An RNA of 177 nucleotides, treated with 2A3 and DMS and read out base by base.
[RMDB]
RNA sequence: GGGAACGACUCGAGUAGAGUCGAAAAGAUAUGGAGCUGUGCGAGACGUCAUCGGAAACGAUGAUACGUCGAUGAGCCAGCUCCUAAGUCAAAGAUAGGUGUACUGGUUCGCCAGUACACCUAUCAACAUCCUUUGUAUCUUCGGAUACAAAGGAUGAAAAGAAACAACAACAACAAC
Reactivity to 2A3 in 0.01 (KOAc 150mM, MgCl2 10mM, bicine 150mM(pH8.5), 24C), signal-to-noise 3, nucleotides 027 to 126: g020a010u060a050u130g010g000a010g000c010u030g060u300g150c020g040a100g000a030c010g010u020c000a000u000c000g040g010a070a040a030c010g000a000u020g010a050u050a100c010g000u010c020g100a180u140g010a010g000c000c000a000g020c000u000c000c000u000a010a010g000u000c040a060a040a050g010a010u000a000g000g020u000g000u000a000c000u000g060g000u060u190c300g040c080c000a000g000u000a000c000a000c000c000u000a000u000c000a000a000
Reactivity to DMS in 0.01 (KOAc 150mM, MgCl2 10mM, bicine 150mM(pH8.5), 24C), signal-to-noise 6, nucleotides 027 to 126: g010a040u000a300u000g000g000a010g010c000u000g000u020g030c000g010a160g010a010c000g020u000c010a000u000c000g010g000a110a070a190c000g020a020u000g000a100u010a020c030g010u000c010g000a120u010g010a300g000c010c010a010g010c010u000c000c000u000a000a060g010u000c050a110a120a130g000a000u000a010g000g010u000g000u000a010c000u000g000g010u000u020c250g010c010c000a010g000u000a000c000a000c010c000u000a000u000c000a090a220
For 2A3, 13,675 sequencing reads were counted.